[RMDB]
The record gives the reactivity of an RNA of 177 nucleotides to DMS and 2A3. The 2A3 profile rests on 2,187 reads.

RNA sequence: GGGAACGACUCGAGUAGAGUCGAAAAGAUAUGGACUGGCUUUGGAAUGUCACGUCAUCGGAAACGAUGACUGUGACGAGAGAAAGUCCAGUCCUAAGUCAAACGGAGUGAGUUCGCUCACUCCGAAUCCCCAGAAACAGUUCGCUGUUUCUGGGGAAAAAGAAACAACAACAACAAC
Reactivity to DMS in 0.01 (KOAc 150mM, MgCl2 10mM, bicine 150mM(pH8.5), 24C), signal-to-noise 1, nucleotides 027 to 126: g010a000u000a080u020g000g000a000c020u000g000g000c010u000u000u010g010g040a160a140u040g000u000c000a010c000g010u000c020a000u000c000g010g010a000a020a030c000g010a020u010g010a000c010u020g030u000g020a000c000g020a070g020a300g020a020a000a000g000u020c000c000a000g010u000c000c000u000a000a100g000u000c010a090a170a250c000g020g000a010g010u000g010a020g010u000u000c300g070c010u000c000a010c000u000c000c000g000a050a050
Reactivity to 2A3 in 0.01 (KOAc 150mM, MgCl2 10mM, bicine 150mM(pH8.5), 24C), signal-to-noise 2, nucleotides 027 to 126: g000a020u000a000u050g000g000a020c000u000g000g040c020u080u020u060g080g240a300a180u300g040u000c000a000c040g000u000c000a010u010c000g000g000a010a010a020c000g020a010u010g000a010c030u030g000u000g000a000c010g000a020g040a000g020a050a010a030g000u170c020c030a000g010u000c000c000u010a000a000g000u000c020a050a090a060c040g020g000a020g000u030g010a000g000u040u180c290g140c140u000c000a000c000u030c020c000g000a000a010